[RMDB]
RNA sequence: GGGAACGACUCGAGUAGAGUCGAAAACACUUCCGCAUUGAGGAUAUUGUUGAAGGUCGCAAGUUAGUUUUAAUGAAACAGUGAUCAUGGAACAUCAUCCUAGGAAGCAGUGUGGCGGCUGGCAGAAUGCCUCACCCCUAUUCGUAGGGGUGAGGCAAAAAGAAACAACAACAACAAC
Reactivity to 2A3 in 0.01 (KOAc 150mM, MgCl2 10mM, bicine 150mM(pH8.5), 24C), signal-to-noise 1, nucleotides 027 to 126: c010a060c000u040u000c000c000g040c010a090u070u060g100a130g000g070a040u000a000u000u000g000u000u000g000a240a030g000g000u020c000g000c000a000a100g010u070u080a040g030u030u050u090u210a230a300u100g160a030a020a000c020a030g000u000g000a000u000c000a060u180g030g040a000a000c000a000u070c000a000u000c010c000u020a050g030g020a000a000g010c050a050g010u010g020u020g150g000c080g000g020c000u010g000g000c000a000g030a060a000
Reactivity to DMS in 0.01 (KOAc 150mM, MgCl2 10mM, bicine 150mM(pH8.5), 24C), signal-to-noise 1, nucleotides 027 to 126: c210a260c080u000u000c020c000g010c180a130u070u000g010a030g000g020a030u000a080u040u000g000u000u000g000a230a030g010g020u010c000g020c010a020a100g010u000u030a270g000u010u010u000u060a020a050u040g000a090a050a020c030a110g000u000g050a000u010c010a100u020g000g020a010a030c020a000u000c130a010u000c010c000u000a180g000g000a030a100g010c030a090g000u030g000u000g000g000c050g000g000c000u080g000g000c000a030g000a070a070